[RMDB]
RNA sequence: GGGAACGACUCGAGUAGAGUCGAAAAGUCGGCCUCGAUCCGCGCAACGUCGCGGUGAUCGGCAAGUGCUAUUCCACUCACCCGGGAGUUGUCGACGCGAUGCGGGCCGACGGCAUCUAUGUCGACGAGAGCACGGUUCGUUCGCGAACCGUGCUCUAAAAGAAACAACAACAACAAC
Reactivity to 2A3 in 0.01 (KOAc 150mM, MgCl2 10mM, bicine 150mM(pH8.5), 24C), signal-to-noise 1, nucleotides 027 to 126: g010u000c010g000g000c060c000u170c010g030a040u000c030c000g020c000g000c060a300a000c130g190u220c010g000c000g000g040u090g000a040u020c030g090g000c220a140a020g000u060g040c040u030a020u170u000c000c000a040c000u000c000a040c000c140c000g060g000g000a190g040u090u050g020u060c000g000a130c060g060c010g050a000u020g160c000g010g020g000c000c030g000a040c000g040g000c000a010u010c040u200a100u300g060u060c030g000a020c020g000
Description
This 177-nucleotide RNA was probed chemically with 2A3. For 2A3 the reverse transcriptase was SuperScript II with manganese. The RNA was probed in 150 mM KOAc, 10 mM MgCl2 and 150 mM bicine (pH 8.5) at 24 C.